[RMDB]
RNA sequence: GGGAACGACUCGAGUAGAGUCGAAAAGUAUCCCUAGAUGUUAAAACACCGCACAUGGCUCGUAAGAGCGGUUAAAUUAGCAAGUAAUGCAAAUUACGCGAGGUAACGCAUGGCCUAGGCUCGUUAGAAAAGGGAGAAUCCUUCGGGAUUCUCCCAACCUUAAGUUGUCCUUCGGGACAACUUAAGGAAAAGAAACAACAACAACAAC
Reactivity to 2A3 in 0.01 (KOAc 150mM, MgCl2 10mM, bicine 150mM(pH8.5), 24C), signal-to-noise 2, nucleotides 027 to 156: g020u010a080u050c000c000c000u020a070g070a210u040g030u030u100a010a070a000a000c030a010c020c010g030c010a020c010a250u080g140g010c000u010c140g110u080a140a030g050a010g090c000g000g000u020u050a000a000a070u060u060a000g040c020a070a080g070u120a210a030u160g020c050a020a070a140u120u040a060c050g060c020g020a040g090g070u090a110a010c070g020c100a110u150g100g040c010c020u010a020g020g040c010u000c080g010u020u030a050g100a060a060a040a090g020g000g000a000g020a000a000u000c000c020u030u060c130g050g000g000a000u000u000c010u000c000c000c000a000a000
Reactivity to DMS in 0.01 (KOAc 150mM, MgCl2 10mM, bicine 150mM(pH8.5), 24C), signal-to-noise 1, nucleotides 027 to 156: g030u000a130u000c010c000c000u010a110g060a140u010g010u000u000a020a090a140a170c060a040c030c040g010c090a120c080a090u000g010g000c000u010c030g030u000a090a130g000a110g000c000g000g000u000u000a020a120a220u010u010a120g010c030a060a080g030u010a070a030u000g010c080a070a050a070u000u000a080c030g000c020g040a100g030g000u000a040a110c030g000c060a050u000g000g000c070c040u000a100g000g020c010u000c020g000u000u020a130g000a050a030a100a230g010g010g010a040g050a060a010u000c000c020u000u000c300g020g010g000a020u000u000c000u000c000c000c000a000a010